[RMDB]
This 207-nucleotide RNA was probed chemically with 2A3 and DMS. DMS adducts were read by reverse transcription with MarathonRT. The DMS profile rests on 11,283 reads. The reactions ran in a buffer of 150 mM KOAc, 10 mM MgCl2 and 150 mM bicine (pH 8.5), at 24 C. It was measured as part of the RMDB library OK3TST.
RNA sequence: GGGAACGACUCGAGUAGAGUCGAAAAAUCGGAGCAGCAUGUAGUCUGGGUUCUGCCUGGCAGAGGGAGGCAACCAAAACUUCUUGGGGAGAGGAGAUUUCGCCUUAACGUCAUCCCACUGGGAUUAGAGGAUGUGUUUCGCUAAGUGCUCUUCCUACUCCUAAUUAAUGUUCGCAUUAAUUAGGAGAAAAGAAACAACAACAACAAC
Reactivity to 2A3 in 0.01 (KOAc 150mM, MgCl2 10mM, bicine 150mM(pH8.5), 24C), signal-to-noise 9, nucleotides 027 to 156: a010u090c050g030g010a040g020c020a000g000c020a040u100g040u160a040g050u040c050u070g030g020g020u100u040c050u080g030c000c020u050g040g030c050a040g010a060g070g030g010a020g000g020c030a040a050c020c030a020a030a050a090c060u110u090c010u060u080g030g000g010g010a070g000a010g030g010a040g010a050u040u080u090c050g020c010c000u030u060a070a030c020g070u030c040a040u010c010c020c050a150c140u140g010g040g020a040u050u100a070g040a050g050g020a040u030g060u010g010u050u070u080c030g000c040u030a070a030g040u060g080c000u010c010u030u010c010c000u020a060
Reactivity to DMS in 0.01 (KOAc 150mM, MgCl2 10mM, bicine 150mM(pH8.5), 24C), signal-to-noise 4, nucleotides 027 to 156: a100u000c060g020g010a130g030c020a080g030c040a110u010g020u020a070g030u000c050u020g030g020g030u000u000c070u000g040c020c020u010g020g050c060a110g000a160g020g010g010a120g020g020c050a070a090c040c030a060a050a050a060c080u010u000c060u000u000g010g010g020g020a130g020a080g010g020a090g000a160u010u000u000c090g000c020c020u000u010a030a070c050g010u000c050a070u000c000c000c010a140c120u010g010g020g000a140u000u000a100g000a090g010g010a050u010g020u000g000u010u000u000c040g010c020u000a010a170g000u000g020c030u000c010u000u000c010c010u000a170